[RMDB]
RNA sequence: GGGAACGACUCGAGUAGAGUCGAAAAGAUAUGGAGGCUGUUGGGAGCAGCUCGGAAACGAGGCUGCGAGGAUCAACUGCCUCCUAAGUCAAAGGUCAUACAGUCAGUUCGCUGACUGUAUGACCAAUCUUCUUAAAUGCUUCGGCAUUUAAGAAGAAAAAGAAACAACAACAACAAC
Reactivity to 2A3 in 0.01 (KOAc 150mM, MgCl2 10mM, bicine 150mM(pH8.5), 24C), signal-to-noise 2, nucleotides 027 to 126: g030a010u060a040u170g000g010a000g000g000c040u060g000u010u000g000g020g000a020g000c010a000g030c000u000c000g010g030a070a060a040c030g000a040g300g080c010u000g000c020g050a130g010g000a020u010c000a000a000c000u000g000c010c000u000c000c000u010a010a010g010u000c020a100a000a090g000g000u010c010a000u000a000c000a010g020u000c000a010g000u030u130c190g030c190u020g010a000c010u000g000u000a000u000g010a000c010c000a000a000
Reactivity to DMS in 0.01 (KOAc 150mM, MgCl2 10mM, bicine 150mM(pH8.5), 24C), signal-to-noise 3, nucleotides 027 to 126: g000a070u020a300u000g010g010a020g000g020c000u000g030u000u000g000g000g020a050g030c000a000g000c000u000c000g000g000a100a100a170c010g020a030g010g020c010u000g000c000g010a070g000g000a050u000c010a020a010c000u000g000c000c000u000c000c000u000a000a090g010u010c030a060a100a140g000g000u000c000a010u000a020c000a000g020u000c000a010g020u000u030c250g010c000u000g000a000c000u010g000u000a010u000g000a020c000c000a010a020

An RNA of 177 nucleotides, treated with 2A3 and DMS and read out base by base. The RNA was probed in 150 mM KOAc, 10 mM MgCl2 and 150 mM bicine (pH 8.5) at 24 C. The 2A3 profile rests on 5,765 reads. The DMS profile rests on 3,756 reads. 2A3 adducts were read by reverse transcription with SuperScript II with manganese. DMS (dimethyl sulfate) methylates the pairing face of unpaired adenines and cytosines.